[RMDB]
RNA sequence: GGGAACGACUCGAGUAGAGUCGAAAAGAUAUGGAGUAUUCGAGUAGACUGUGUGUCGGAAACGACACCCAGUCGCAGAUACGAGAUACUCCUAAGUCAAAGGAAACCAUCUUCGGAUGGUUUCCAACGAAUACGUUAACUUCGGUUAACGUAUUCGAAAAGAAACAACAACAACAAC
Reactivity to DMS in 0.01 (KOAc 150mM, MgCl2 10mM, bicine 150mM(pH8.5), 24C), signal-to-noise 5, nucleotides 027 to 126: g000a010u000a040u010g000g000a020g010u000a010u000u000c010g000a170g000u000a030g010a010c000u000g000u000g010u000g010u000c000g010g010a010a010a040c010g010a010c000a000c000c070c000a000g010u000c000g030c240a070g010a130u000a030c010g000a230g010a030u000a010c000u000c000c010u000a000a050g000u000c010a090a120a140g010g000a010a010a010c000c000a000u000c000u000u020c230g020g000a010u000g000g000u000u000u000c000c000a030a040
Reactivity to 2A3 in 0.01 (KOAc 150mM, MgCl2 10mM, bicine 150mM(pH8.5), 24C), signal-to-noise 2, nucleotides 027 to 126: g010a000u030a010u060g010g010a000g020u010a030u070u300c010g010a010g030u060a050g040a010c000u000g000u000g000u000g000u010c010g000g000a000a000a010c000g000a010c000a000c040c030c010a000g020u000c000g010c000a010g020a040u070a020c000g000a010g010a040u010a010c000u000c000c000u000a000a000g000u000c040a160a070a100g000g000a000a000a000c000c010a000u010c000u050u100c280g150g000a000u000g000g000u000u000u000c000c000a000a000
Chemical mapping of a 177-nucleotide RNA with DMS and 2A3. 2A3 adducts were read by reverse transcription with SuperScript II with manganese. In probing experiments dimethyl sulfate is read out at A N1 and C N3, which are open when not base-paired. Values cover nucleotides 27 to 126. The RNA was probed in 150 mM KOAc, 10 mM MgCl2 and 150 mM bicine (pH 8.5) at 24 C.